This 207-nucleotide RNA was probed chemically with 2A3 and DMS. Reactivities are given for positions 27 through 156. The 2A3 profile rests on 1,820 reads.

RNA sequence: GGGAACGACUCGAGUAGAGUCGAAAAAUAGCCUACUAUACACCUAGGCUAUAUGGUAUAGCCUACUGCUCCUAGACUAUAAACCUGUGCGGCAUGUUGCUGUACUGAAUAUUGUAGGCAGUUGUAACACAAUGGUAAGUAUUUGUGUAUCAAAACACGGUUAAGAUGAUUUCGAUCAUCUUAACCGAAAAGAAACAACAACAACAAC
Reactivity to 2A3 in 0.01 (KOAc 150mM, MgCl2 10mM, bicine 150mM(pH8.5), 24C), signal-to-noise 4, nucleotides 027 to 156: a000u070a010g000c010c000u010a030c050u090a050u030a120c090a040c030c020u010a000g020g000c020u020a020u010a010u070g120g000u150a030u050a090g000c000c020u050a060c050u060g060c010u100c010c000u030a040g060a170c090u080a080u170a260a160a080c020c010u040g000u000g010c010g020g000c050a060u230g130u160u290g050c010u010g010u020a000c010u000g050a030a040u110a040u150u090g010u020a010g000g010c000a000g000u030u050g040u060a080a010c000a040c020a070a000u030g050g150u210a180a130g070u060a250u030u030u030g020u010g020u020a100u160c090a020a080a020a010c040a020
Reactivity to DMS in 0.01 (KOAc 150mM, MgCl2 10mM, bicine 150mM(pH8.5), 24C), signal-to-noise 2, nucleotides 027 to 156: a050u000a020g010c000c010u000a010c020u000a170u020a110c050a050c110c050u000a040g020g050c000u000a000u000a040u010g030g010u010a060u000a030g010c000c000u000a050c020u000g000c050u000c080c030u000a050g020a020c030u000a040u000a080a110a090c050c030u000g050u000g000c010g020g000c040a180u000g040u000u000g010c000u010g010u000a110c010u000g010a090a130u000a080u000u000g040u020a110g010g050c000a090g000u000u000g020u010a130a070c050a090c030a020a060u000g050g010u000a060a180g010u000a150u020u000u010g030u000g010u000a140u010c070a030a080a080a080c060a220
Source: RMDB library OK3TST, as collected in RNAgym.